[RMDB]
RNA sequence: GGGAACGACUCGAGUAGAGUCGAAAAAGAGUGCAAACUCUAGCUCAAGGCGAUAAUCAAGUGAUCUGUACACAGUAUAAAUUACAACCCAUGCGAAAUGAGCAGGAACUCAGGAUAGCUUUGAAUCCCUCAAGCACAAAUUCGUUUGUGCUUGAGGAAAAGAAACAACAACAACAAC
Reactivity to 2A3 in 0.01 (KOAc 150mM, MgCl2 10mM, bicine 150mM(pH8.5), 24C), signal-to-noise 7, nucleotides 027 to 126: a000g040a000g010u060g030c070a100a060a080c000u000c010u030a040g030c010u020c030a020a010g040g020c050g050a080u080a150a070u180c060a080a060g030u030g080a070u040c030u030g060u060a030c140a000c020a090g040u050a040u050a120a110a040u180u100a050c040a040a060c020c020c040a070u120g010c010g080a120a050a140u130g020a050g030c020a020g070g040a040a030c010u010c030a010g100g030a040u030a050g020c000u040u020u060g050a050a060u070c010
Reactivity to DMS in 0.01 (KOAc 150mM, MgCl2 10mM, bicine 150mM(pH8.5), 24C), signal-to-noise 3, nucleotides 027 to 126: a030g000a000g030u010g020c260a130a070a050c010u000c000u000a130g000c040u000c010a020a020g000g020c050g010a030u030a060a080u040c110a060a150g010u020g020a020u010c040u000g010u000a070c120a070c120a070g000u010a040u000a030a070a030u020u000a040c070a080a190c090c010c090a060u010g020c040g000a050a070a140u030g000a070g020c050a120g020g020a050a050c050u020c090a080g000g020a050u000a050g020c020u010u000u000g010a000a070u040c080
Chemical mapping of a 177-nucleotide RNA with 2A3 and DMS.
In probing experiments dimethyl sulfate is read out at A N1 and C N3, which are open when not base-paired.
It was measured as part of the RMDB library OK1LIB.
Reactivities are rounded to 0.1 and cut off at 0 and 3.
The RNA was probed in 150 mM KOAc, 10 mM MgCl2 and 150 mM bicine (pH 8.5) at 24 C.
The 2A3 profile rests on 7,558 reads.